The record gives the reactivity of an RNA of 177 nucleotides to 2A3 and DMS.
Reactivities are rounded to 0.1 and cut off at 0 and 3.
The data come from the RNA Mapping Database (RMDB), library RFMREP.
For 2A3 the reverse transcriptase was SuperScript II with manganese.
RNA sequence: GGGAACGACUCGAGUAGAGUCGAAAAGGAGCUAUAAUACUAAUUUCUGAAUUAGUCAUUGGUAAUUCAAUGCCAACCUCCACAGGGUGGACUAAGGUUGAGGUAUAGAAUCCUAUUCGCUCCUGGUACCUGAACAAUUGUUCGCAAUUGUUCAGGUAAAAGAAACAACAACAACAAC
Reactivity to 2A3 in 0.01 (KOAc 150mM, MgCl2 10mM, bicine 150mM(pH8.5), 24C), signal-to-noise 2, nucleotides 027 to 126: g000g000a000g000c010u030a010u060a250a150u130a080c000u000a000a060u020u050u120c110u200g200a070a040u020u000a020g010u020c040a090u050u130g030g010u090a090a040u030u000c010a010a020u000g000c000c000a000a020c000c000u030c030c000a020c040a090g300g080g040u020g000g000a040c100u130a040a030g010g030u030u020g070a070g080g000u020a020u010a070g020a010a020u050c000c000u030a080u060u030c050g030c020u000c000c000u030g030g030u000
Reactivity to DMS in 0.01 (KOAc 150mM, MgCl2 10mM, bicine 150mM(pH8.5), 24C), signal-to-noise 2, nucleotides 027 to 126: g000g000a010g000c000u000a080u000a080a100u000a030c000u000a000a000u000u000u040c200u020g030a040a010u000u000a010g000u000c090a100u010u020g000g010u000a080a040u010u030c010a050a020u000g000c020c000a030a010c010c000u000c010c020a010c040a240g030g000g010u000g000g000a110c170u010a150a020g000g000u000u000g010a130g000g010u010a110u000a040g010a090a050u000c010c010u010a130u010u000c170g010c080u000c010c000u000g000g010u000